An RNA of 207 nucleotides, treated with 2A3 and read out base by base. Conditions: 150 mM KOAc, 10 mM MgCl2 and 150 mM bicine (pH 8.5), 24 C. It was measured as part of the RMDB library ARCHII.
RNA sequence: GGGAACGACUCGAGUAGAGUCGAAAACUAAGUAGCGACCGCGUGUCUGUCAGCCCGGGGAUGUCCCUGCCCCGGAUGCUGGCAUCGACUAAGGGACUUGCUAUCCAACCGCGUCAGCGGGGUUGGAUGGGACUUCUACCGCUGACUGGGCCCAUCAGUGUUACUCAAUCUUCGGAUUGAGUAACACAAAAGAAACAACAACAACAAC
Reactivity to 2A3 in 0.01 (KOAc 150mM, MgCl2 10mM, bicine 150mM(pH8.5), 24C), signal-to-noise 2, nucleotides 027 to 156: c030u100a140a050g190u040a100g150c050g040a030c020c040g290c160g120u300g010u040c040u010g010u000c000a000g000c000c000c000g000g000g000g000a010u040g000u000c000c010c000u010g010c010c000c000c000g000g000a000u200g000c000u000g000g020c010a020u110c110g170a160c050u070a010a070g000g000g000a020c000u040u300g010c000u000a000u000c000c000a000a000c000c010g000c010g000u010c000a020g000c000g000g000g010g000u000u000g000g000a010u000g010g000g030a000c000u160u040c030u190a300c010c000g010c010u010g000a000c000u000g000g020g020c000c020c020a070u070c180a050